[RMDB]
RNA sequence: GGGAACGACUCGAGUAGAGUCGAAAAGACGGAAAAGAUCGAACCUAAGAAGAUCAGGAAGUGGGAGCCGAAUCCUAGGGCUCCUAGGGACGCAUCGUCCGAUGCGAAAUAAACACUAACGUCGAAACACCAUUACGCGAUUCGUCGCGUAAUGGUGAAAAGAAACAACAACAACAAC
Reactivity to 2A3 in 0.01 (KOAc 150mM, MgCl2 10mM, bicine 150mM(pH8.5), 24C), signal-to-noise 2, nucleotides 027 to 126: g000a010c000g010g010a170a030a130a110g000a020u000c030g000a100a140c000c000u040a100a050g060a010a000g000a120u000c000a020g230g140a170a000g150u030g010g000g000a000g020c030c010g050a020a140u060c000c020u080a020g040g000g000c010u000c020c020u000a030g000g080g020a040c000g000c000a040u000c000g290u120c030c140g000a000u000g000c000g040a000a010a120u070a000a070a000c050a010c060u120a260a000c000g000u000c010g000a020a020a020
Reactivity to DMS in 0.01 (KOAc 150mM, MgCl2 10mM, bicine 150mM(pH8.5), 24C), signal-to-noise 3, nucleotides 027 to 126: g040a000c020g010g040a100a100a060a090g000a010u020c000g010a200a060c180c150u050a080a100g000a160a130g000a010u000c030a080g000g010a160a120g060u000g120g050g000a000g070c000c000g050a170a080u000c010c090u000a110g010g020g050c000u000c000c010u060a000g000g040g000a270c000g010c000a030u020c000g030u210c300c300g000a060u000g000c070g040a020a040a040u030a060a100a260c060a020c030u000a070a240c010g000u000c010g020a040a090a060